Structure probing data (2A3) for a 207-nucleotide construct. It was measured as part of the RMDB library M2RFPK.
RNA sequence: GGGAACGACUCGAGUAGAGUCGAAAAACGAGACCGUACGCGGACUCGAAGGGCCCCAGAAGACCAAGGGGCCCAAACCUACCACUCAUUAGAUGCAUGGAAAUCACUAGGUGAUACGUCACCUAGAACACGCUUUUAAGCUUCGGCUUAAAAGCAAGCUAACUGAACAGUUCGCUGUUCAGUUAGCAAAAGAAACAACAACAACAAC
Reactivity to 2A3 in 0.01 (KOAc 150mM, MgCl2 10mM, bicine 150mM(pH8.5), 24C), signal-to-noise 3, nucleotides 027 to 156: a000c010g000a000g010a010c010c000g020u040a020c240g020c020g070g010a040c010u000c000g010a020a070g000g000g000c030c000c000c010a120g090a300a050g050a110c080c100a100a120g020g000g000g020c000c000c050a010a000a000c000c000u020a020c000c050a030c020u050c010a120u100u170a070g050a090u100g050c090a030u090g090g160a030a110a090u190c050a040c040u000a000g000g000u000g000a010u030a060c240g080u000c010a000c000c000u010a000g010a010a000c020a000c060g000c000u020u000u000u000a010a010g000c000u010u140c280g050g000c010u010u010a000a000a000a000g000c000a000a000